[RMDB]
The data come from the RNA Mapping Database (RMDB), library M2RFPK. Structure probing data (DMS and 2A3) for a 207-nucleotide construct. The RNA was probed in 150 mM KOAc, 10 mM MgCl2 and 150 mM bicine (pH 8.5) at 24 C. DMS adducts were read by reverse transcription with MarathonRT. Values cover nucleotides 27 to 156.

RNA sequence: GGGAACGACUCGAGUAGAGUCGAAAAUGAGACAAACACGCUUCACAAUGUGCGGCAAAGAAACAUUGUUUAUGCAAAGGCAUUUCGCAAUGUGUGCUCAAACAUUGCUUAUUCAAACACGCUUCACAAAAGAAUCAGUGGUUCGCCACUGAUUCAAGAUGAGGAUACGGUUCGCCGUAUCCUCAUCAAAAGAAACAACAACAACAAC
Reactivity to DMS in 0.01 (KOAc 150mM, MgCl2 10mM, bicine 150mM(pH8.5), 24C), signal-to-noise 2, nucleotides 027 to 156: u030g030a100g050a190c080a160a090a080c080a020c030g020c060u020u000c030a120c020a010a030u010g070u010g030c050g000g020c050a130a090a090g040a070a060a060c020a030u000u010g020u000u000u010a090u000g010c070a060a210a090g000g010c020a030u000u000u000c140g030c060a060a030u010g000u000g030u000g000c030u000c040a050a130a040c030a060u000u000g030c040u000u000a080u010u010c090a070a030a120c080a040c090g020c000u000u010c040a160c110a080a070a150a190g010a000a010u000c000a010g070u010g040g010u000u010c300g030c020c000a020c010u010g030a020u010u010c020a030a100
Reactivity to 2A3 in 0.01 (KOAc 150mM, MgCl2 10mM, bicine 150mM(pH8.5), 24C), signal-to-noise 6, nucleotides 027 to 156: u160g010a010g050a060c090a020a140a010c070a010c060g000c010u020u010c010a000c000a010a010u010g010u010g000c000g050g020c100a110a090a020g120a010a060a000c000a010u000u000g070u030u070u060a070u090g040c040a060a060a090g170g000c030a020u020u090u140c060g000c000a010a010u010g000u000g020u070g040c050u060c140a080a050a000c000a010u010u010g000c000u060u100a150u100u130c070a050a100a020c070a020c130g070c060u130u130c100a070c060a100a100a040a040g010a000a000u000c000a000g010u010g030g040u040u050c170g030c050c000a000c010u000g000a000u000u000c000a000a000